[RMDB]
RNA sequence: GGGAACGACUCGAGUAGAGUCGAAAAGACUGACAGUCAGUCACUCUCUGUGAGUCUCACAGACACUCUCACACAGUGUGUGUGACACUGAGACUGUCACAGACUCACUCAGUCUGUCAGUCAGAGAACCCGUGUGUCUGUUCGCAGACACACGGGUAAAAGAAACAACAACAACAAC
Reactivity to 2A3 in 0.01 (KOAc 150mM, MgCl2 10mM, bicine 150mM(pH8.5), 24C), signal-to-noise 1, nucleotides 027 to 126: g000a010c020u010g000a000c010a030g010u100c010a010g020u170c040a070c060u210c000u000c060u040g000u000g030a020g020u010c010u000c050a070c020a020g080a040c000a010c050u030c020u050c010a030c000a000c030a200g060u020g010u010g060u020g000u020g260a010c030a020c140u050g020a000g010a060c010u010g010u060c000a020c010a010g000a010c000u010c020a040c010u020c000a030g060u000c010u020g010u000c020a020g030u000c010a000g010a000g030a070
Reactivity to DMS in 0.01 (KOAc 150mM, MgCl2 10mM, bicine 150mM(pH8.5), 24C), signal-to-noise 1, nucleotides 027 to 126: g000a000c010u000g000a000c010a020g020u000c110a050g030u000c100a040c130u010c060u000c050u000g000u000g030a080g000u020c000u000c090a080c140a030g020a050c050a030c110u000c020u000c100a120c090a200c230a100g000u000g050u000g000u000g000u000g000a040c170a110c140u000g000a040g000a170c110u000g000u000c050a090c200a030g000a040c040u000c070a140c030u000c070a000g000u000c000u000g010u000c000a000g010u000c000a100g000a090g020a150